Background
This 177-nucleotide RNA was probed chemically with DMS and 2A3. Reactivities are rounded to 0.1 and cut off at 0 and 3. For 2A3 the reverse transcriptase was SuperScript II with manganese. The data come from the RNA Mapping Database (RMDB), library OK2TST.
[RMDB]
RNA sequence: GGGAACGACUCGAGUAGAGUCGAAAAGAAUUGGUACAAGAUUGCCAGCAGCAAUGAGGAUACCAUUCAAAGAUGUAUUGCCACGGGAAAACUUGCACACCAGUACCUUAAUCACCAUAAACCCAUCCUACAUUAGAUUCUUCGGAAUCUAAUGUAGAAAAGAAACAACAACAACAAC
Reactivity to DMS in 0.01 (KOAc 150mM, MgCl2 10mM, bicine 150mM(pH8.5), 24C), signal-to-noise 6, nucleotides 027 to 126: g020a080a040u000u010g020g010u000a050c040a120a130g010a050u010u000g010c020c050a150g020c170a170g000c030a020a020u000g010a180g010g010a200u000a030c060c030a040u010u000c050a120a090a090g000a060u010g020u010a050u010u010g010c020c020a070c090g000g000g010a060a040a090a070c060u000u000g000c040a040c080a070c060c030a040g020u000a060c060c040u000u000a050a070u000c070a060c040c030a050u010a040a070a100c020c010c010a090u010c140
Reactivity to 2A3 in 0.01 (KOAc 150mM, MgCl2 10mM, bicine 150mM(pH8.5), 24C), signal-to-noise 6, nucleotides 027 to 126: g030a020a060u140u090g000g000u020a010c040a050a050g060a250u020u070g050c030c050a070g030c060a010g010c010a090a050u080g020a070g150g040a070u030a070c010c020a010u030u030c030a070a050a030g100a070u100g020u110a070u040u130g040c010c020a010c020g020g040g000a050a110a000a060c030u030u070g010c050a020c010a010c050c000a020g030u060a050c010c010u030u060a060a030u060c030a010c070c010a020u100a040a080a050c000c000c000a030u070c000